[RMDB]
RNA sequence: GGGAACGACUCGAGUAGAGUCGAAAAACUAGGAGCGCACAUCUCUCUAUGACUGUACGACAGUCUGUCUCUCUAGCACGCUUGUUCAACGAGAGAGAGAGAGCGUUGGAACAAGUGUGCAACGAAAAUUACUUUGUGUAUUCGUACACAAAGUAAUAAAAGAAACAACAACAACAAC
Reactivity to DMS in 0.01 (KOAc 150mM, MgCl2 10mM, bicine 150mM(pH8.5), 24C), signal-to-noise 9, nucleotides 027 to 126: a090c150u000a080g000g010a090g010c090g020c090a060c100a100u000c020u000c010u010c020u000a070u010g000a020c010u000g000u000a060c090g010a300c300a010g010u000c000u010g000u000c060u000c010u000c040u000a270g010c010a010c010g010c020u000u000g010u000u000c010a020a020c020g000a060g000a130g000a100g000a070g000a050g000a050g010c020g010u000u000g020g010a020a020c010a010a020g010u000g020u000g000c000a030a040c230g000a030a060a060
Reactivity to 2A3 in 0.01 (KOAc 150mM, MgCl2 10mM, bicine 150mM(pH8.5), 24C), signal-to-noise 9, nucleotides 027 to 126: a000c080u080a050g030g030a030g020c060g050c060a030c030a210u060c020u000c010u000c020u060a090u190g010a010c010u040g080u170a030c050g050a030c070a010g000u000c020u050g030u000c090u000c000u000c040u060a030g000c000a000c000g000c000u000u010g000u000u010c000a010a010c010g000a020g010a010g000a010g010a010g010a010g010a210g030c010g000u010u030g140g010a020a010c000a000a000g000u000g000u000g000c000a000a000c040g060a070a060a030